This 177-nucleotide RNA was probed chemically with 2A3.
RNA sequence: GGGAACGACUCGAGUAGAGUCGAAAAGUGCAUUGUCCGAAGGGUCUUUUCUCUGUUCUAGAUUCCAGAGGAGACUUGCCAGCUUAUCUUGGAUCCAAGACCUCAGAAUCAACAUCCAUCCUUCAGCUCGCGAGUCUUACUUCGGUAAGACUCGCGAAAAAGAAACAACAACAACAAC
Reactivity to 2A3 in 0.01 (KOAc 150mM, MgCl2 10mM, bicine 150mM(pH8.5), 24C), signal-to-noise 2, nucleotides 027 to 126: g150u080g050c030a070u020u290g030u140c010c020g060a030a030g000g010g000u020c000u000u030u150u040c030u020c050u050g070u150u000c050u040a010g000a230u240u010c020c000a050g000a010g020g040a030g000a040c000u030u070g050c010c000a050g010c100u170u050a000u240c050u010u020g000g010a040u000c050c000a120a120g120a210c020c010u070c010a050g080a060a030u050c080a000a060c000a030u040c010c000a080u040c000c000u060u040c030a080g060c030